[RMDB]
The record gives the reactivity of an RNA of 177 nucleotides to DMS and 2A3.
For DMS the reverse transcriptase was MarathonRT.
RNA sequence: GGGAACGACUCGAGUAGAGUCGAAAAAGACCUUCAAGGCUACGGUGCGUUGCGACGCACGGUCUGAUUCUUCACAACGACGUUCACCGCGUCUUCUUCCAUCCCCCUGGGGCAGUGACUGCCCUCGCGUCCAGGAAUGAUUCGUCAUUCCUGGACGAAAAGAAACAACAACAACAAC
Reactivity to DMS in 0.01 (KOAc 150mM, MgCl2 10mM, bicine 150mM(pH8.5), 24C), signal-to-noise 4, nucleotides 027 to 126: a030g000a100c100c020u000u020c120a070a080g000g010c040u010a090c110g010g040u000g010c010g000u020u020g030c130g020a050c030g000c010a000c020g010g000u000c020u000g000a190u010u010c030u000u010c080a080c150a130a110c080g000a030c040g000u000u020c090a090c060c070g000c110g000u000c010u010u010c040u010u010c030c020a120u010c030c000c000c050c020u000g010g000g000g030c000a020g000u020g000a080c100u000g000c020c000c000u000c150g010
Reactivity to 2A3 in 0.01 (KOAc 150mM, MgCl2 10mM, bicine 150mM(pH8.5), 24C), signal-to-noise 6, nucleotides 027 to 126: a000g040a040c030c010u050u050c080a080a040g040g000c030u100a020c110g140g010u040g020c020g010u030u060g080c160g100a010c000g010c010a010c020g010g010u000c010u020g040a070u080u030c030u080u090c060a030c020a190a050c070g020a000c020g060u090u170c030a020c080c000g000c010g000u000c000u030u010c010u060u040c030c010a080u050c020c000c000c010c000u030g000g000g030g020c000a020g010u080g240a120c120u020g000c010c000c000u000c010g030